Chemical mapping of a 177-nucleotide RNA with DMS and 2A3. The data come from the RNA Mapping Database (RMDB), library OK1LIB. The 2A3 profile rests on 1,236 reads. The reactions ran in a buffer of 150 mM KOAc, 10 mM MgCl2 and 150 mM bicine (pH 8.5), at 24 C. 2A3 adducts were read by reverse transcription with SuperScript II with manganese. High DMS reactivity at an A or C suggests that its Watson-Crick edge is free.
RNA sequence: GGGAACGACUCGAGUAGAGUCGAAAAGAAAGCGCGACAGUGACUACCUGAGGCCGGUAAGGUAGGAACUGGAGGGACAGAAUGUCUCGAGACGUAUGACCGGCCAAAUGCGUCGAGCGCGAAGAAAGGGAAAUACGAUGUUCGCAUCGUAUUUCCCAAAAGAAACAACAACAACAAC
Reactivity to DMS in 0.01 (KOAc 150mM, MgCl2 10mM, bicine 150mM(pH8.5), 24C), signal-to-noise 1, nucleotides 027 to 126: g000a140a250a140g010c000g000c000g040a270c000a030g000u000g000a270c000u000a030c060c010u000g000a220g000g020c000c050g100g000u060a070a050g000g050u000a070g030g000a070a010c000u000g000g000a300g020g000g020a000c000a040g000a150a040u010g010u030c000u000c000g000a190g000a000c020g000u070a000u050g000a190c000c000g060g000c000c030a060a040a020u080g000c000g040u000c000g000a190g010c000g000c000g000a050a060g000a090a040a000
Reactivity to 2A3 in 0.01 (KOAc 150mM, MgCl2 10mM, bicine 150mM(pH8.5), 24C), signal-to-noise 2, nucleotides 027 to 126: g050a030a070a000g020c010g000c010g000a000c000a000g000u000g040a030c000u020a000c040c030u140g050a000g070g060c030c040g030g030u090a220a000g020g000u010a020g000g000a000a000c010u000g000g020a030g050g020g000a000c000a020g300a290a170u090g000u030c000u000c000g070a050g000a010c010g040u040a050u050g060a070c000c000g000g020c000c000a000a040a040u230g000c000g000u000c000g020a020g000c000g000c070g000a020a000g080a020a070a010